[RMDB]
RNA sequence: GGGAACGACUCGAGUAGAGUCGAAAACGCGUUCGCGGCAACCUGCCGAACCGCAUGGAUGAGAGCCAUGCGGUUCAGCGGUACGCCAGCGCCAAUCACCGGGCGCCCGGAGGCAUCCGACACCAUCCGAUGGGCAGUCGCGUACGAGAACUGUCCGCUGAUGAUACUGAUUCGUCAGUAUCAUCAGAAAAGAAACAACAACAACAAC
Reactivity to DMS in 0.01 (KOAc 150mM, MgCl2 10mM, bicine 150mM(pH8.5), 24C), signal-to-noise 1, nucleotides 027 to 156: c050g010c040g020u000u000c060g060c030g010g000c020a220a100c060c000u020g140c000c000g010a000a020c080c000g090c020a020u000g010g010a090u020g030a300g000a230g000c010c000a000u000g010c010g000g000u000u010c000a010g000c060g040g010u000a010c060g030c010c030a000g030c060g050c000c010a100a130u000c060a150c050c000g000g000g020c000g030c000c050c040g030g000a150g030g030c100a130u000c050c030g020a120c040a070c030c020a090u000c040c030g010a140u000g050g020g020c010a070g000u000c070g010c050g030u000a030c060g010a090g010a040a100c020u010g040u000c020c030g040
Reactivity to 2A3 in 0.01 (KOAc 150mM, MgCl2 10mM, bicine 150mM(pH8.5), 24C), signal-to-noise 5, nucleotides 027 to 156: c060g010c020g010u050u040c030g000c030g040g020c080a050a050c010c040u130g010c000c030g000a020a000c010c000g000c020a020u000g010g020a070u190g090a160g040a030g160c020c060a010u070g000c000g000g000u000u000c000a000g000c010g000g000u030a030c060g000c000c000a010g000c010g010c000c000a050a100u080c040a030c110c020g020g000g000c020g020c000c050c000g060g010a050g010g020c030a060u080c070c050g060a050c030a040c080c020a120u030c000c020g050a110u110g010g010g000c010a000g010u010c010g020c050g070u070a070c060g040a040g020a110a040c030u040g010u040c010c020g020